[RMDB]
RNA sequence: GGGAACGACUCGAGUAGAGUCGAAAAACGGAUAGAUUCGUCUAUCCGUGCAUCUCAUAACAGACAGAGAAAGUCUGCUAAGAUCUCACUUAGAUAAAGAGUAGAGAGUCGAGUUCGCUCGACUCAACGUAGUAGCUGGUUUCGACCAGCUACUACGAAAAGAAACAACAACAACAAC
Reactivity to 2A3 in 0.01 (KOAc 150mM, MgCl2 10mM, bicine 150mM(pH8.5), 24C), signal-to-noise 2, nucleotides 027 to 126: a000c000g000g000a000u000a000g010a010u030u030c160g000u020c110u010a000u000c000c010g000u000g000c010a060u010c010u000c010a100u080a130a070c010a000g020a010c020a000g190a010g140a300a170a030g050u000c010u000g000c000u050a040a040g000a110u050c010u000c060a080c020u010u060a020g030a080u140a160a180a030g060a020g010u140a020g070a000g000a010g040u000c000g010a000g000u020u080c170g020c060u010c010g020a010c000u030c000a010a000
Reactivity to DMS in 0.01 (KOAc 150mM, MgCl2 10mM, bicine 150mM(pH8.5), 24C), signal-to-noise 2, nucleotides 027 to 126: a010c010g000g000a010u000a000g010a020u000u010c160g020u000c000u000a000u010c000c000g000u000g020c160a130u000c030u020c000a170u030a080a120c000a020g010a030c000a040g010a160g010a130a160a060g000u000c000u010g010c070u010a040a070g000a100u000c030u000c100a060c060u010u000a030g010a190u010a070a120a050g000a060g010u010a080g010a170g000a020g000u000c000g000a000g040u000u020c160g000c020u000c000g000a000c000u010c000a050a060